[RMDB]
RNA sequence: GGGAACGACUCGAGUAGAGUCGAAAAUUUCGCAGUAGCUGCCUAAUCGCACUCUGCAUCGCCUAACAGCAUUUCCUAUGUGCUGUUAACGCGAUUCAACCUUAAUAGGAUAUGCUAAACACUGCCGUUUGAAGUCUGUUUAGAAGAAACUUAAUCAGCUGAUCAGUAUCUUCGGAUACUGAUCAGCAAAAGAAACAACAACAACAAC
Reactivity to 2A3 in 0.01 (KOAc 150mM, MgCl2 10mM, bicine 150mM(pH8.5), 24C), signal-to-noise 1, nucleotides 027 to 156: u110u120u180c080g000c020a010g010u300a000g030c180u010g000c020c010u050a100a060u210c070g030c000a000c000u000c000u000g030c000a000u000c000g010c000c050u000a000a000c000a000g010c000a000u110u020u000c000c000u000a000u000g000u010g040c020u000g020u000u040a030a000c000g000c000g110a030u270u220c070a020a090c020c000u090u300a020a000u000a000g000g000a010u010a010u010g000c000u000a020a020a020c000a010c010u000g000c020c110g210u030u030u200g020a030a020g000u060c080u020g010u040u000u000a030g000a000a030g000a020a300a010c080u220u130a040a220u130c080a020